[RMDB]
RNA sequence: GGGAACGACUCGAGUAGAGUCGAAAAAGUAUACAUGGAAGAAAAUAACAAAAUACUCCCUAUUGAAAUAGCGGAAGAAAUGAAAAAAUCGUAUAUUGAUUAUUCAAUGAGUGUUAUAGCUGGACGUGCUCUUCCUGAUGUUAGAGAUGGUUUAAAACGUAUUAUAAUGAUUCGUCAUUAUAAUACGAAAAGAAACAACAACAACAAC
Reactivity to DMS in 0.01 (KOAc 150mM, MgCl2 10mM, bicine 150mM(pH8.5), 24C), signal-to-noise 2, nucleotides 027 to 156: a060g010u000a080u000a050c030a100u000g030g010a150a080g000a150a100a060a110u010a080a140c050a040a060a080a110u010a130c050u000c010c010c020u010a130u000u000g000a110a130a160u000a050g010c110g030g000a060a060g010a080a120a080u010g000a000a060a090a110a080a050u000c010g000u010a150u000a130u020u000g000a060u000u020a150u000u000c000a030a050u000g030a090g030u000g000u000u010a060u000a120g030c020u000g010g010a100c100g050u000g000c070u000c030u000u070c030c010u000g000a090u010g030u000u000a070g010a140g010a130u000g000g010u000u000u000a040a080a110a190
Reactivity to 2A3 in 0.01 (KOAc 150mM, MgCl2 10mM, bicine 150mM(pH8.5), 24C), signal-to-noise 3, nucleotides 027 to 156: a000g050u030a060u020a070c030a040u070g030g000a050a000g020a080a170a070a090u150a090a040c060a100a080a070a050u080a070c010u000c010c000c000u000a050u010u160g070a180a130a060u020a020g030c070g060g000a040a020g020a030a140a080u080g020a070a100a040a000a000a000u050c020g000u070a050u020a060u300u120g010a020u010u150a020u110u040c020a050a050u120g010a050g100u010g020u100u040a060u050a060g030c030u080g050g050a050c060g030u060g020c000u030c000u040u050c010c000u010g060a040u120g050u060u070a010g000a010g010a040u080g110g000u010u060u130a010a080a000a000

Conditions: 150 mM KOAc, 10 mM MgCl2 and 150 mM bicine (pH 8.5), 24 C. Structure probing data (DMS and 2A3) for a 207-nucleotide construct. For 2A3 the reverse transcriptase was SuperScript II with manganese.